Structure probing data (2A3 and DMS) for a 177-nucleotide construct. The data come from the RNA Mapping Database (RMDB), library RFM100.
RNA sequence: GGGAACGACUCGAGUAGAGUCGAAAAAGGUAGCGAAAUUCCUUGUCGGGUAAGUUCCGACCUGCACGAAAGGCGCAACGACUUGGGCGCUGUCUCAACCAUGGACCCGGUGAAAUUCCACUAGUCGGAUCUAGCCCGUAUUCGUACGGGCUAGAUCAAAAGAAACAACAACAACAAC
Reactivity to 2A3 in 0.01 (KOAc 150mM, MgCl2 10mM, bicine 150mM(pH8.5), 24C), signal-to-noise 2, nucleotides 027 to 126: a000g080g000u050a010g020c040g050a040a000a070u070u080c000c000u000u020g050u020c030g000g030g030u060a110a070g070u160u000c020c000g040a070c000c020u030g010c110a030c050g040a190a020a090g030g000c000g000c000a070a010c000g010a080c010u050u080g090g000g000c000g000c000u000g030u010c000u000c010a010a010c020c000a020u030g030g010a040c000c000c040g000g000u040g020a100a000a000u090u010c000c000a010c060u040a040g000u070c030g000
Reactivity to DMS in 0.01 (KOAc 150mM, MgCl2 10mM, bicine 150mM(pH8.5), 24C), signal-to-noise 2, nucleotides 027 to 126: a110g000g010u000a040g050c150g000a130a030a120u070u000c020c020u000u000g000u010c050g060g000g000u000a070a130g080u020u010c090c000g010a030c060c060u020g060c060a020c080g000a030a050a050g000g010c040g000c000a040a140c010g010a010c120u020u000g000g010g000c020g080c220u000g010u010c010u020c010a020a060c110c040a030u030g000g010a070c040c000c000g010g000u040g010a010a080a160u000u030c020c010a040c140u020a010g000u000c070g010
Conditions: 150 mM KOAc, 10 mM MgCl2 and 150 mM bicine (pH 8.5), 24 C.